[RMDB]
RNA sequence: GGGAACGACUCGAGUAGAGUCGAAAAUUCCUGUUUUUUUAUGAAACAUUGUGAAAGAAUGAAAGUUUUUUCACAUACUCUCUUAAAACCCAUGUUUUCAAUGAGGAAUUUGUGGUAAUAACUGGAGCAGAUAUGAACAAUUCGUUGUUCAUAUCUGAAAAGAAACAACAACAACAAC
Reactivity to DMS in 0.01 (KOAc 150mM, MgCl2 10mM, bicine 150mM(pH8.5), 24C), signal-to-noise 6, nucleotides 027 to 126: u000u010c000c000u010g000u000u000u010u000u010u020u010a070u040g010a080a050a060c060a080u020u010g010u000g010a020a000a010g000a010a000u000g000a140a120a160g000u000u000u000u000u000u000c000a010c010a030u010a130c090u000c010u000c170u000u000a030a050a100a080c210c020c010a020u000g000u000u000u000u010c030a120a130u030g010a140g000g000a020a010u000u000u000g030u000g010g010u010a060a100u010a050a090c170u000g000g010a030g010
Reactivity to 2A3 in 0.01 (KOAc 150mM, MgCl2 10mM, bicine 150mM(pH8.5), 24C), signal-to-noise 9, nucleotides 027 to 126: u020u010c000c000u010g010u000u030u010u010u010u010u070a210u110g060a030a060a040c060a080u080u050g000u000g000a010a010a000g010a010a010u060g080a100a060a100g020u000u000u000u000u000u000c010a000c000a000u030a030c020u020c000u000c010u050u060a030a050a070a070c010c010c000a030u040g060u020u030u020u050c180a270a210u300g060a160g140g000a030a040u040u040u100g070u090g020g010u030a080a060u040a110a080c100u080g000g010a000g030